[RMDB]
Background: The record gives the reactivity of an RNA of 207 nucleotides to 2A3. The 2A3 profile rests on 815 reads. It was measured as part of the RMDB library M2RFPK.

RNA sequence: GGGAACGACUCGAGUAGAGUCGAAAAAUCAGCCUUCGUUCUGUAAACGGGGUUGGAUCCGACUCUCAUAGGCUCUCCAACCCAACUCCUACUCAAUACGUCCUCGUCGUACAGGACGGUAACAUGUAAAACGAAGGCUGCUUCGGCAGCCUUCGAAGAUUACUCUGCGGUUCGCCGCAGAGUAAUCAAAAGAAACAACAACAACAAC
Reactivity to 2A3 in 0.01 (KOAc 150mM, MgCl2 10mM, bicine 150mM(pH8.5), 24C), signal-to-noise 2, nucleotides 027 to 156: a000u040c010a020g040c000c050u270u260c040g040u080u080c030u090g070u120a220a000a000c020g010g000g000g000u000u000g000g000a010u170c010c000g050a030c030u070c020u040c130a190u120a270g010g000c010u020c000u000c040c010a000a020c020c020c010a010a020c020u000c010c000u040a060c040u010c050a020a060u060a220c000g030u030c010c030u040c020g090u020c050g000u110a030c050a000g000g000a000c000g000g010u050a070a000c030a080u130g040u170a030a070a070a090c010g000a000a000g000g000c000u010g010c000u010u010c000g110g010c020a010g000c000c000u000u010c020g000a030a000